[RMDB]
RNA sequence: GGGAACGACUCGAGUAGAGUCGAAAACGUCUCCGCGUGGAAGGACAGGUCCAGACGUCGCGAGUCCUUUUUGUUUGUGUCUGCAUGGGAGAAUCUCGGUGCCACAUAGUUGGGAGGUCCGAUACGGCGAUAAAAAUUGUUUCGACAAUUUUUAUCGAAAAGAAACAACAACAACAAC
Reactivity to 2A3 in 0.01 (KOAc 150mM, MgCl2 10mM, bicine 150mM(pH8.5), 24C), signal-to-noise 5, nucleotides 027 to 126: c030g040u000c010u000c000c000g020c020g020u070g050g010a020a030g030g020a010c010a030g010g030u000c010c000a010g000a020c030g010u030c010g010c010g020a030g050u020c000c000u030u020u020u050u050g110u010u040u080g070u010g020u000c030u040g020c020a050u020g010g020g010a070g030a060a060u040c020u010c030g050g000u030g020c010c000a040c010a030u120a030g080u090u060g030g010g010a030g000g040u010c010c000g010a010u010a080c070g000g020
Reactivity to DMS in 0.01 (KOAc 150mM, MgCl2 10mM, bicine 150mM(pH8.5), 24C), signal-to-noise 7, nucleotides 027 to 126: c130g010u010c020u010c020c050g000c060g020u010g000g010a090a060g000g000a040c040a080g010g020u010c030c040a080g000a090c080g010u010c050g010c050g010a110g020u010c010c010u000u010u010u020u010g000u000u010u010g010u000g000u000c040u030g000c040a050u020g010g010g000a090g010a100a090u010c050u010c010g000g010u010g000c020c040a050c070a080u010a090g010u010u010g000g010g010a070g000g000u010c010c010g010a130u020a050c100g000g010
An RNA of 177 nucleotides, treated with 2A3 and DMS and read out base by base. For 2A3, 5,994 sequencing reads were counted. Values cover nucleotides 27 to 126. The RNA was probed in 150 mM KOAc, 10 mM MgCl2 and 150 mM bicine (pH 8.5) at 24 C.